[RMDB]
RNA sequence: GGGAACGACUCGAGUAGAGUCGAAAACUCGCCAAUAUGGUGAAUCACCAUCUCUACUAAAUAUACAUAAAUUAGCUGGGCAUGGUGGUGCGCGCCUACUCCCAGCUAUCGGGAGGCUGAGGCCGGAGAAUCACUAGAAUCAGGGAGGUGGAGGUUAGCGAUAGCAAAAUUUCGAUUUUGCUAUCGCAAAAGAAACAACAACAACAAC
Reactivity to DMS in 0.01 (KOAc 150mM, MgCl2 10mM, bicine 150mM(pH8.5), 24C), signal-to-noise 1, nucleotides 027 to 156: c040u000c050g000c020c010a080a160u010a090u000g030g010u000g010a020a050u000c010a030c040c010a070u000c020u000c000u000a190c050u000a020a080a080u020a120u010a180c060a150u000a090a060a190u000u000a020g020c050u000g010g030g020c280a100u000g000g060u030g040g000u000g010c000g020c070g010c050c030u000a120c090u000c000c000c000a140g010c090u000a020u000c050g040g000g010a060g000g000c140u000g010a050g010g070c020c050g020g010a100g000a080a040u010c030a050c020u000a090g020a080a060u000c040a010g020g010g000a090g030g070u000g000g020a080g040g020u000u010a140
Reactivity to 2A3 in 0.01 (KOAc 150mM, MgCl2 10mM, bicine 150mM(pH8.5), 24C), signal-to-noise 2, nucleotides 027 to 156: c010u010c010g030c020c020a110a080u120a120u270g000g000u010g040a040a050u100c030a010c020c000a030u030c010u000c010u050a110c030u050a120a110a040u210a060u140a130c050a070u250a090a200a090u120u040a040g020c030u030g010g040g000c070a030u040g010g030u010g000g030u060g040c090g000c000g000c010c000u030a040c020u040c010c010c000a000g000c040u060a080u070c010g010g020g000a040g050g000c050u080g050a080g030g050c020c000g070g010a060g030a020a070u050c050a020c050u060a060g050a090a080u090c050a030g040g000g000a030g010g000u020g000g040a030g040g000u010u040a020
An RNA of 207 nucleotides, treated with DMS and 2A3 and read out base by base.
The DMS profile rests on 2,278 reads.
For DMS the reverse transcriptase was MarathonRT.
The RNA was probed in 150 mM KOAc, 10 mM MgCl2 and 150 mM bicine (pH 8.5) at 24 C.